[RMDB]
RNA sequence: GGGAACGACUCGAGUAGAGUCGAAAAAUUAUACCUACAGUUUCUAUGGUUUUGCACCUUAUAAACUCAAAUUGCUAUGUACUGAUUUCCAGUGGGGAUGUCAAGGAGGCAUGGGAACUGGAGUUUACUAGUGAGUCCUAUUCGUAGGACUCACUAGAAAAGAAACAACAACAACAAC
Reactivity to DMS in 0.01 (KOAc 150mM, MgCl2 10mM, bicine 150mM(pH8.5), 24C), signal-to-noise 2, nucleotides 027 to 126: a080u000u020a050u030a160c060c000u010a100c120a040g000u000u000u000c020u000a020u000g000g000u010u010u030u010g000c180a070c000c030u000u000a070u010a160a050a070c030u000c060a020a090a030u000u000g010c100u000a080u010g020u000a050c070u000g000a110u000u020u000c080c030a150g020u000g020g020g020g000a080u000g000u000c130a020a080g020g010a150g010g030c010a000u000g030g000g030a020a020c040u000g000g010a090g000u000u000u000a120
Reactivity to 2A3 in 0.01 (KOAc 150mM, MgCl2 10mM, bicine 150mM(pH8.5), 24C), signal-to-noise 1, nucleotides 027 to 126: a030u160u110a090u050a100c030c020u010a040c020a000g000u000u000u000c010u030a080u020g110g150u060u020u210u260g110c050a020c020c000u140u000a130u020a070a020a000c000u060c030a070a080a160u120u080g070c020u050a030u150g130u030a030c080u050g080a170u020u090u090c070c010a080g080u110g020g190g090g020a040u040g070u070c010a070a060g040g040a060g000g160c020a000u030g000g000g000a010a000c010u020g000g030a050g010u020u090u030a070
The record gives the reactivity of an RNA of 177 nucleotides to DMS and 2A3.
The RNA was probed in 150 mM KOAc, 10 mM MgCl2 and 150 mM bicine (pH 8.5) at 24 C.
The data come from the RNA Mapping Database (RMDB), library OK2TST.